An RNA of 177 nucleotides, treated with 2A3 and DMS and read out base by base. 2A3 adducts were read by reverse transcription with SuperScript II with manganese. For DMS the reverse transcriptase was MarathonRT. Source: RMDB library OK2TRN, as collected in RNAgym. For 2A3, 3,407 sequencing reads were counted. Conditions: 150 mM KOAc, 10 mM MgCl2 and 150 mM bicine (pH 8.5), 24 C. DMS (dimethyl sulfate) methylates the pairing face of unpaired adenines and cytosines.

[RMDB]
RNA sequence: GGGAACGACUCGAGUAGAGUCGAAAAGAUCGAACCCUGCUGACCGAGAGGACUUGUGAUGUCGCAAAUCAUGUACAACUACCCCGCGAUGUUGGGUCACGCCGGGGAUAUGGCCGGAUAUGCCGGCGGACGAUGUCUAUUUCGAUAGACAUCGUCCAAAAGAAACAACAACAACAAC
Reactivity to 2A3 in 0.01 (KOAc 150mM, MgCl2 10mM, bicine 150mM(pH8.5), 24C), signal-to-noise 4, nucleotides 027 to 126: g070a070u120c040g000a050a130c010c000c000u020g030c020u020g020a010c010c000g040a050g020a050g150g080a080c050u090u060g030u100g070a080u050g040u060c010g020c090a070a080a020u120c050a060u110g040u150a080c010a090a030c060u150a110c000c000c030c000g010c020g040a040u050g030u080u060g070g010g010u020c020a010c070g060c040c030g020g000g000g020a000u070a060u060g080g030c020c000g000g010a060u090a040u300g170c000c000g000g000c000
Reactivity to DMS in 0.01 (KOAc 150mM, MgCl2 10mM, bicine 150mM(pH8.5), 24C), signal-to-noise 4, nucleotides 027 to 126: g010a090u020c100g020a130a130c020c010c020u000g020c030u000g000a090c110c020g010a130g000a130g020g010a050c150u000u010g020u010g000a070u000g020u010c070g000c080a040a070a090u010c060a030u000g020u020a090c130a040a080c120u020a170c040c000c000c060g000c050g000a050u020g000u000u010g000g000g000u000c030a040c100g010c030c040g010g000g010g030a090u000a040u010g010g030c020c000g010g000a260u020a090u000g020c000c000g000g000c040